An RNA of 177 nucleotides, treated with DMS and 2A3 and read out base by base. For 2A3 the reverse transcriptase was SuperScript II with manganese.
RNA sequence: GGGAACGACUCGAGUAGAGUCGAAAACUUUCCACAACGUUGGAGAUGAAGCUGGGCUUUCGAGUCUGCGCCUGCAUAUUCCUACGACUUCUCAGAGUCCCGUGGACCAUGACUGAGGAGACAAACCAUUCGGGGUAUAUUUCGAUAUACCCCGAAUAAAAGAAACAACAACAACAAC
Reactivity to DMS in 0.01 (KOAc 150mM, MgCl2 10mM, bicine 150mM(pH8.5), 24C), signal-to-noise 4, nucleotides 027 to 126: c230u010u000u020c010c000a080c150a070a180c120g040u020u000g000g000a080g010a020u000g000a150a160g000c030u010g010g010g000c020u000u010u020c100g020a050g000u000c030u020g010c190g000c060c010u000g010c030a050u000a100u020u000c000c000u000a060c110g030a160c000u000u020c010u000c030a020g010a230g010u000c010c000c180g040u030g000g020a060c110c220a160u030g010a130c020u010g000a010g040g000a030g000a100c150a070a110a080c200c140
Reactivity to 2A3 in 0.01 (KOAc 150mM, MgCl2 10mM, bicine 150mM(pH8.5), 24C), signal-to-noise 6, nucleotides 027 to 126: c010u030u030u000c000c010a070c030a120a110c070g030u040u050g010g010a070g000a030u080g040a030a030g010c040u070g030g010g020c010u030u070u110c120g060a020g010u010c010u030g030c060g050c030c030u070g040c040a020u040a140u070u060c000c000u010a020c040g060a080c030u000u000c010u000c000a020g010a020g050u020c020c040c080g100u260g030g030a030c020c030a180u170g090a100c010u000g000a000g000g010a000g020a020c060a030a100a060c090c020